Conditions: 150 mM KOAc, 10 mM MgCl2 and 150 mM bicine (pH 8.5), 24 C. The record gives the reactivity of an RNA of 207 nucleotides to 2A3. The 2A3 profile rests on 645 reads.
[RMDB]
RNA sequence: GGGAACGACUCGAGUAGAGUCGAAAACCCCGGCGCUUUGUCUGCGAGACCGGACCAGGAUGGCUCAAACUAAUGUAGACUCGCGUGGAGGCUUUGUCCGGAGCUGAAGCGUUAAAACCAAUCGGACUCGUCAGUUGUGAAGCCUGUCAGUCGGCGUACAUGUAAAGGUGUUCGCACCUUUACAUGUAAAAGAAACAACAACAACAAC
Reactivity to 2A3 in 0.01 (KOAc 150mM, MgCl2 10mM, bicine 150mM(pH8.5), 24C), signal-to-noise 1, nucleotides 027 to 156: c040c010c000c010g050g020c110g020c190u120u020u140g030u030c000u040g000c030g010a010g020a000c000c050g050g030a050c000c100a080g200g040a230u170g060g030c040u070c080a050a110a150c140u190a050a060u110g040u040a010g010a050c000u010c000g000c000g000u020g010g050a010g010g000c000u030u030u040g000u000c020c030g000g020a000g000c050u040g010a000a000g010c030g000u000u010a030a040a050a090c050c050a060a030u140c020g010g020a000c010u000c040g110u030c070a170g000u000u000g030u030g030a060a000g000c060c010u040g200u140c100a090g090u100c010g000g030c030g000u010
2A3 adducts were read by reverse transcription with SuperScript II with manganese.